[RMDB]
The record gives the reactivity of an RNA of 177 nucleotides to 2A3 and DMS. The RNA was probed in 150 mM KOAc, 10 mM MgCl2 and 150 mM bicine (pH 8.5) at 24 C. For DMS the reverse transcriptase was MarathonRT. It was measured as part of the RMDB library OK2TST.
RNA sequence: GGGAACGACUCGAGUAGAGUCGAAAACUAUUUACCAGGCUAAAUUCCUGAAAUAUCUGGAACACCGUGGCCUGAAAGAUACCUCUAAACAAACCGUUUACGCGUUCCUCGGUGACGGUGAAAUGGACCAUAUGUCGGUAUUCGUACCGACAUAUGGAAAAGAAACAACAACAACAAC
Reactivity to 2A3 in 0.01 (KOAc 150mM, MgCl2 10mM, bicine 150mM(pH8.5), 24C), signal-to-noise 3, nucleotides 027 to 126: c010u020a060u040u070u040a090c070c020a020g000g000c000u040a080a080a030u070u010c000c000u020g050a110a090a080u240a050u030c080u060g000g010a040a000c070a020c070c110g070u070g050g000c000c000u020g010a020a010a000g020a010u090a050c020c060u060c040u100a080a090a040c040a110a150a040c050c000g030u030u050u100a130c190g050c030g060u040u030c040c020u020c020g060g000u000g040a000c000g000g000u020g000a020a020a080u100g040g030a030
Reactivity to DMS in 0.01 (KOAc 150mM, MgCl2 10mM, bicine 150mM(pH8.5), 24C), signal-to-noise 3, nucleotides 027 to 126: c170u010a030u000u000u030a140c240c020a040g010g000c030u000a040a100a200u000u000c010c010u000g000a070a200a130u010a090u020c080u000g000g000a090a200c070a060c130c180g020u000g010g000c040c000u000g010a060a120a080g000a040u000a050c090c030u000c070u020a030a040a070c110a070a110a040c160c110g000u000u000u000a060c120g000c080g010u010u000c030c050u000c040g000g010u020g010a020c000g000g000u000g010a060a050a080u010g000g000a300